[RMDB]
RNA sequence: GGGAACGACUCGAGUAGAGUCGAAAAGAAAAUUAUGAAUUUGGCGCCGAGUUGAUUUGGAGUAGUACUAUGGUUUUGGGUACUCACAUAGUACAUUCCGAAUCGACUCGUUAACAAAUUUAAAUAACCGCGUAGAUAUUUUCGAAUAUCUACGCGGAAAAGAAACAACAACAACAAC
Reactivity to 2A3 in 0.01 (KOAc 150mM, MgCl2 10mM, bicine 150mM(pH8.5), 24C), signal-to-noise 3, nucleotides 027 to 126: g030a000a100a020a050u190u110a080u160g020a000a020u000u000u000g100g000c080g010c020c000g020a000g000u000u000g000a000u000u000u010g010g010a000g020u180a020g000u000a080c000u000a010u000g040g140u110u100u160u200g220g050g030u090a060c020u040c050a040c000a030u000a000g000u000a000c000a000u000u000c000c000g000a000a000u000c000g000a000c000u000c000g000u000u000a000a010c000a000a010a010u030u040u050a170a130a040u110a030a050